[RMDB]
RNA sequence: GGGAACGACUCGAGUAGAGUCGAAAAAGGACCCCAAGCCAGGCCAGGUCUACUUGGAGGUCACUGAUGAAGUUCAACAGCAGGCUAAGGAAUUAGACCUUACUCUGCAACAAUAUGCUGCAUAUCUCAAGCUCUGCCACGCCAGAUGGUCCGUAAGCGUUCUGUACCGGUUCGCCGGUACAGAACGAAAAGAAACAACAACAACAAC
Reactivity to 2A3 in 0.01 (KOAc 150mM, MgCl2 10mM, bicine 150mM(pH8.5), 24C), signal-to-noise 2, nucleotides 027 to 156: a000g030g000a020c010c000c000c000a020a010g050c040c070a040g090g000c080c070a100g000g100u070c000u010a040c010u000u000g070g000a060g180g060u000c020a020c060u020g010a030u080g070a080a060g060u080u180c100a070a030c010a170g030c020a020g050g040c080u030a000a000g060g020a060a040u180u030a170g070a080c000c000u000u000a000c030u030c020u040g000c000a030a000c010a010a080u130a090u300g030c020u030g000c040a050u060a150u140c040u020c020a060a020g000c000u000c000u030g020c040c040a060c020g070c000c020a010g060a190u000g040g010u010c000c020g050u060a020a060g090